[RMDB]
This 177-nucleotide RNA was probed chemically with 2A3 and DMS. For 2A3 the reverse transcriptase was SuperScript II with manganese. DMS adducts were read by reverse transcription with MarathonRT. The 2A3 profile rests on 5,849 reads. The data come from the RNA Mapping Database (RMDB), library OK1LIB. Conditions: 150 mM KOAc, 10 mM MgCl2 and 150 mM bicine (pH 8.5), 24 C. The DMS profile rests on 4,910 reads. Reactivities are given for positions 27 through 126.

RNA sequence: GGGAACGACUCGAGUAGAGUCGAAAAGAAAGCGGAAUCCAACGACCAACCAGAAGAUGCCGCAACAGGUGAAAAGAAACACCUGAACAAAGAAAACGUGUGAUUCUGGUUUACACGCGAAAGAAAACCAGUAUCCACUAUUCGUAGUGGAUACUGGAAAAGAAACAACAACAACAAC
Reactivity to 2A3 in 0.01 (KOAc 150mM, MgCl2 10mM, bicine 150mM(pH8.5), 24C), signal-to-noise 5, nucleotides 027 to 126: g070a030a050a000g030c040g020g020a050a050u070c050c030a100a060c050g060a030c030c020a030a000c010c000a000g000a040a000g060a070u110g020c000c000g000c030a040a050c000a020g000g010u010g040a080a110a100a080g150a030a190a010c000a000c000c000u000g020a060a020c080a050a100a040g190a060a070a010a000c030g030u050g010u020g080a060u050u010c000u030g020g000u000u020u040a030c010a010c020g060c020g100a050a060a080g120a020a100a040a040
Reactivity to DMS in 0.01 (KOAc 150mM, MgCl2 10mM, bicine 150mM(pH8.5), 24C), signal-to-noise 4, nucleotides 027 to 126: g010a080a110a160g030c000g000g000a100a080u010c010c130a070a130c220g000a150c070c050a040a060c010c010a010g000a050a080g020a120u020g020c000c010g010c080a170a140c010a000g010g010u000g000a100a110a090a130g010a130a080a080c000a000c000c000u000g000a120a060c140a090a070a150g010a090a080a090a140c050g000u010g010u000g000a080u000u000c020u000g000g000u000u000u010a030c030a040c030g000c070g010a050a080a090g000a070a040a110a090